[RMDB]
RNA sequence: GGGAACGACUCGAGUAGAGUCGAAAAGGGGUCUGCAAUGCCUCUCCCACCCAGAGCUUGGAUUUAUAUGGCUGAAGCCUCCACGGCCAUAUUGUCAGCUCUGGUGGGAUGUAUUGCAGACGGAGGCACCCAAAAUCAACGCGUUCGCGCGUUGAAACUGAAAAAAUUUGUUCGCAAAUUUUUUCAGAAAAGAAACAACAACAACAAC
Reactivity to 2A3 in 0.01 (KOAc 150mM, MgCl2 10mM, bicine 150mM(pH8.5), 24C), signal-to-noise 2, nucleotides 027 to 156: g010g020g040g010u000c010u000g000c000a020a020u000g010c000c030u070c030u030c000c000c000a020c050c110c060a000g000a000g010c140u300u300g130g000a080u190u300u060a000u070a000u000g010g000c000u010g050a140a020g010c010c000u000c010c010a020c020g000g000c010c020a000u010a010u000u030g010u030c080a100g010c010u010c000u000g000g000u000g000g000g010a020u160g030u010a010u000u000g000c000a000g000a010c000g000g000a020g000g040c020a040c010c010c010a060a060a010a180u030c000a000a000c000g020c000g020u060u060c300g020c000g000c000g110u000u000g000a050a020a000
Notes: An RNA of 207 nucleotides, treated with 2A3 and read out base by base. The reactions ran in a buffer of 150 mM KOAc, 10 mM MgCl2 and 150 mM bicine (pH 8.5), at 24 C. It was measured as part of the RMDB library RNAMAK. The 2A3 profile rests on 1,196 reads.